An RNA of 177 nucleotides, treated with 2A3 and DMS and read out base by base. Reactivities are given for positions 27 through 126. DMS adducts were read by reverse transcription with MarathonRT.
RNA sequence: GGGAACGACUCGAGUAGAGUCGAAAAGAAGUACUGUUCGCAGUACUUCAAACGGCAACGGCUAGGCCAAGCCGAAGCCGAACGGCAAGCCGAAGGCCAAAAAAACCGUUCCCUUCGGGGAACGGAACCCAAUAAGUGUCUUCGGACACUUAUUGGGAAAAGAAACAACAACAACAAC
Reactivity to 2A3 in 0.01 (KOAc 150mM, MgCl2 10mM, bicine 150mM(pH8.5), 24C), signal-to-noise 2, nucleotides 027 to 126: g000a010a000g000u010a000c000u010g020u050u140c270g000c100a010g010u000a000c000u000u010c000a000a000a010c040g010g010c010a010a010c010g010g000c020u040a070g050g090c020c030a000a010g000c000c010g000a000a000g000c010c000g020a060a030c070g050g000c060a040a040g060c040c030g120a120a070g060g000c000c000a040a000a010a010a030a010a060c010c000g000u000u000c010c000c000u010u030c230g060g000g000g010a000a000c000g000g010a000a000
Reactivity to DMS in 0.01 (KOAc 150mM, MgCl2 10mM, bicine 150mM(pH8.5), 24C), signal-to-noise 2, nucleotides 027 to 126: g000a030a000g000u010a000c010u000g000u020u000c120g010c010a030g020u000a010c000u000u010c000a010a080a160c020g010g000c000a060a300c000g020g000c010u000a060g020g010c090c070a120a070g000c030c000g000a030a300g000c000c000g020a030a090c150g010g000c110a090a100g010c050c040g000a130a140g000g010c010c000a010a000a080a110a060a030a080c000c000g030u000u010c010c000c000u000u010c130g000g000g010g010a000a010c020g000g030a020a010